An RNA of 177 nucleotides, treated with 2A3 and DMS and read out base by base. The 2A3 profile rests on 20,187 reads.
[RMDB]
RNA sequence: GGGAACGACUCGAGUAGAGUCGAAAAGGCUGCCGAGGCCACAGAACCGCCGUCGCAGGAGCCGUCAAGCAUGGAGGUGGAGAGCGAAGUGGUGGCUGCAAAGGAGAGCCUGCGGGCGGCCGAGGCCCUACCAAUACGAUUUCGAUCGUAUUGGUAGAAAAGAAACAACAACAACAAC
Reactivity to 2A3 in 0.01 (KOAc 150mM, MgCl2 10mM, bicine 150mM(pH8.5), 24C), signal-to-noise 2, nucleotides 027 to 126: g010g000c010u010g000c010c010g030a010g000g010c000c010a040c010a030g050a110a080c010c010g000c010c010g040u040c000g000c020a020g010g090a040g010c020c020g130u090c030a070a070g140c100a150u210g080g010a040g040g010u090g030g090a110g010a010g040c020g010a040a010g080u120g210g010u020g020g000c020u040g010c060a160a110a060g120g040a150g050a050g040c000c030u300g300c110g050g020g000c000g000g000c010c000g010a030g000g040c000c020
Reactivity to DMS in 0.01 (KOAc 150mM, MgCl2 10mM, bicine 150mM(pH8.5), 24C), signal-to-noise 9, nucleotides 027 to 126: g010g010c010u000g010c010c010g010a160g000g020c000c030a180c050a090g010a130a090c010c010g030c010c010g000u000c010g010c010a060g010g020a300g000c010c000g010u010c020a090a150g020c210a120u010g020g000a140g010g020u000g000g010a300g000a070g010c020g010a090a060g010u000g030g040u000g000g010c020u000g000c110a070a130a160g000g000a130g000a180g010c000c000u000g000c010g010g000g000c000g000g010c010c010g010a080g000g010c010c010
For 2A3 the reverse transcriptase was SuperScript II with manganese. For DMS the reverse transcriptase was MarathonRT. The RNA was probed in 150 mM KOAc, 10 mM MgCl2 and 150 mM bicine (pH 8.5) at 24 C. The data come from the RNA Mapping Database (RMDB), library OK2TRN.